Source: RMDB library OK2TRN, as collected in RNAgym. An RNA of 177 nucleotides, treated with DMS and read out base by base. For DMS, 769 sequencing reads were counted. The RNA was probed in 150 mM KOAc, 10 mM MgCl2 and 150 mM bicine (pH 8.5) at 24 C.
RNA sequence: GGGAACGACUCGAGUAGAGUCGAAAAAGAGCUGUCAAGGUGAUGUCAAUCAAAAGGAAAUCUCCUUACAUCCUUGGAGAUAUCCCGUUGUGUAGCUCUGUUCGAAUUAACAAGAAGAUCAGCAGGGAUCAUAGCCACGCUUCGGCGUGGCUAUGAUAAAAGAAACAACAACAACAAC
Reactivity to DMS in 0.01 (KOAc 150mM, MgCl2 10mM, bicine 150mM(pH8.5), 24C), signal-to-noise 1, nucleotides 027 to 126: a010g010a010g000c050u000g010u000c050a020a060g000g050u000g010a020u020g000u000c100a110a140u040c140a070a030a060a050g010g010a020a120a070u020c200u010c070c050u010u000a140c160a080u000c050c120u000u000g000g010a120g000a020u000a040u000c000c020c040g020u000u010g020u050g020u000a020g010c010u030c010u030g000u020u010c130g010a050a040u010u020a080a080c170a110a100g050a080a090g000a010u010c100a050g030c040a110g020g000g000